[RMDB]
RNA sequence: GGGAACGACUCGAGUAGAGUCGAAAAAUGGCUGUUGACAUGGAUGACUGAUAUGGUGCCCUUUCGGGAAAAAAGUGCUUCUUCCAGCAUGAGAGCUGCUGUAGAUGUUGACACGCCGGGCCCCGACUCUACAGUGGGUAUUCGUACCCACUGUAGAAAAAGAAACAACAACAACAAC
Reactivity to DMS in 0.01 (KOAc 150mM, MgCl2 10mM, bicine 150mM(pH8.5), 24C), signal-to-noise 4, nucleotides 027 to 126: a080u010g010g010c020u000g010u000u000g000a030c040a030u000g000g010a080u000g010a070c060u010g010a150u010a090u010g020g020u010g010c010c010c020u000u010u010c160g030g010g010a010a040a050a070a080a070g010u000g000c060u000u000c040u000u010c110c030a040g010c040a030u010g010a090g000a110g010c300u000g010c020u000g010u000a200g000a040u000g010u000u000g000a030c010a020c170g030c020c000g000g010g010c080c010c000c070g000a070c140
Reactivity to 2A3 in 0.01 (KOAc 150mM, MgCl2 10mM, bicine 150mM(pH8.5), 24C), signal-to-noise 3, nucleotides 027 to 126: a010u060g010g000c020u020g020u020u010g010a010c010a050u030g100g030a040u080g050a050c030u030g050a040u080a120u300g170g070u170g020c020c000c000u060u170u180c180g000g020g100a070a060a010a000a000a060g050u080g080c020u020u000c000u150u040c030c000a000g010c010a040u070g060a040g010a020g110c060u030g000c000u020g030u050a070g020a150u020g000u020u010g000a000c010a010c100g000c000c010g000g060g000c020c000c000c010g040a050c030
About this RNA:
Conditions: 150 mM KOAc, 10 mM MgCl2 and 150 mM bicine (pH 8.5), 24 C. This 177-nucleotide RNA was probed chemically with DMS and 2A3.